Structure probing data (2A3 and DMS) for a 177-nucleotide construct. In probing experiments dimethyl sulfate is read out at A N1 and C N3, which are open when not base-paired. Source: RMDB library TTRDES, as collected in RNAgym. As a SHAPE reagent, 2A3 marks flexible, mostly unpaired nucleotides at the ribose 2'-OH. The reactions ran in a buffer of 150 mM KOAc, 10 mM MgCl2 and 150 mM bicine (pH 8.5), at 24 C.

RNA sequence: GGGAACGACUCGAGUAGAGUCGAAAAGAUAUGGAGACUCCAUUAGGGAUCAACAGCAGGCUUCGGAAACGAAGCCUGACAUGAUUGGGAUGGAGGUCUCCUAAGUCAAACGGAACUUCGGUUCCGACCUAACGUAUAAGUUCGCUUAUACGUUAGGAAAAGAAACAACAACAACAAC
Reactivity to 2A3 in 0.01 (KOAc 150mM, MgCl2 10mM, bicine 150mM(pH8.5), 24C), signal-to-noise 9, nucleotides 027 to 126: g000a020u070a020u130g010g000a010g010a010c010u000c020c020a020u030u090a260g300g180g090a090u160c050a060a150c030a120g080c010a000g020g000c000u000u000c000g020g010a070a040a030c010g000a010a000g000c010c000u010g000a010c000a100u130g010a050u070u300g220g090g010a000u010g000g010a020g050g090u000c000u000c000c000u000a060a020g020u000c040a100a050a090c030g000g000a000a000c000u060u090c300g130g000u010u000c000c000g000a040
Reactivity to DMS in 0.01 (KOAc 150mM, MgCl2 10mM, bicine 150mM(pH8.5), 24C), signal-to-noise 9, nucleotides 027 to 126: g010a050u000a300u010g000g010a030g010a160c000u000c000c000a020u000u000a160g020g010g000a040u000c020a050a120c280a160g000c000a010g000g010c000u000u000c000g000g000a090a090a200c000g010a020a000g010c000c000u000g010a010c070a150u010g010a040u000u000g010g020g000a020u000g010g000a020g010g010u000c010u000c000c000u000a010a070g010u000c040a080a110a250c040g000g000a020a010c000u000u010c190g040g010u000u000c000c000g000a080